[RMDB]
The data come from the RNA Mapping Database (RMDB), library M2PK90. An RNA of 177 nucleotides, treated with DMS and 2A3 and read out base by base. For DMS, 1,286 sequencing reads were counted. 2A3 adducts were read by reverse transcription with SuperScript II with manganese. The RNA was probed in 150 mM KOAc, 10 mM MgCl2 and 150 mM bicine (pH 8.5) at 24 C.
RNA sequence: GGGAACGACUCGAGUAGAGUCGAAAAGCAAAUAAAAACAAAAAGUCGUUACAAUGCAGGUAGUGAUAUCUGCAUCUACUGCAAUGAAGCGACUUAAAGCACAUAAAGUACGAAAGUACAAAAAAAAGAAUUACUUCUUGUUCGCAAGAAGUAAUUCAAAAGAAACAACAACAACAAC
Reactivity to DMS in 0.01 (KOAc 150mM, MgCl2 10mM, bicine 150mM(pH8.5), 24C), signal-to-noise 2, nucleotides 027 to 126: g060c110a070a070a080u030a090a060a070a170a070c100a060a110a120a020a000g010u000c000g040u000u000a190c080a050a040u010g000c000a000g000g030u000a010g040u010g040a130u000a050u010c130u000g000c080a000u010c010u010a040c030u000g020c070a070a040u000g000a110a060g000c020g030a000c010u010u000a040a110a110g030c170a060c120a040u010a080a070a050g020u010a000c020g000a120a010a100g000u000a010c020a000a000a000a070a160a060a110a130
Reactivity to 2A3 in 0.01 (KOAc 150mM, MgCl2 10mM, bicine 150mM(pH8.5), 24C), signal-to-noise 2, nucleotides 027 to 126: g010c020a020a130a050u250a060a210a040a040a000c070a000a220a010a020a000g000u000c010g000u000u020a050c020a030a020u030g020c010a010g060g070u050a000g030u020g050a070u040a100u200c080u090g070c010a000u040c000u010a030c020u010g020c010a030a080u070g020a030a000g000c010g010a000c010u000u010a030a000a010g010c020a020c010a140u130a140a140a000g000u020a000c000g040a110a040a030g000u010a010c000a040a030a010a000a010a000a010a050